[RMDB]
RNA sequence: GGGAACGACUCGAGUAGAGUCGAAAAGCUAGGAUACGUCCUAGCAAUAAGUAUCAAAGACAUGUUUAUUUCCACUUCCAUUGCCAUCUCAAGGCUUGGUCUAUGCUUUGGUAUUCUAAGUGGCCAACGCCCAGUUUUAUUUCGAUAAAACUGGGCGAAAAGAAACAACAACAACAAC
Reactivity to DMS in 0.01 (KOAc 150mM, MgCl2 10mM, bicine 150mM(pH8.5), 24C), signal-to-noise 1, nucleotides 027 to 126: g000c000u010a000g000g030a200u000a200c180g020u000c000c050u000a000g000c000a080a030u000a020a080g020u000a000u030c050a000a070a000g000a060c150a110u000g000u000u000u010a000u000u070u020c040c000a020c100u000u000c030c000a000u000u010g080c070c000a150u050c130u030c200a090a090g000g000c000u000u000g000g000u000c070u070a080u050g060c020u010u000u000g000g000u010a000u000u060c050u000a010a120g120u000g010g020c300c090a100a220
Reactivity to 2A3 in 0.01 (KOAc 150mM, MgCl2 10mM, bicine 150mM(pH8.5), 24C), signal-to-noise 3, nucleotides 027 to 126: g000c000u000a020g000g030a020u020a160c300g030u080c000c000u010a000g000c000a000a000u060a070a000g040u040a000u040c010a020a020a000g060a130c010a090u040g080u000u190u150a170u010u240u100c070c070a070c040u100u000c020c000a060u050u190g000c000c000a050u090c080u030c270a120a270g000g000c000u000u010g020g000u000c040u050a060u090g010c060u030u030u000g000g040u020a030u050u000c060u100a200a150g110u100g170g010c070c030a030a040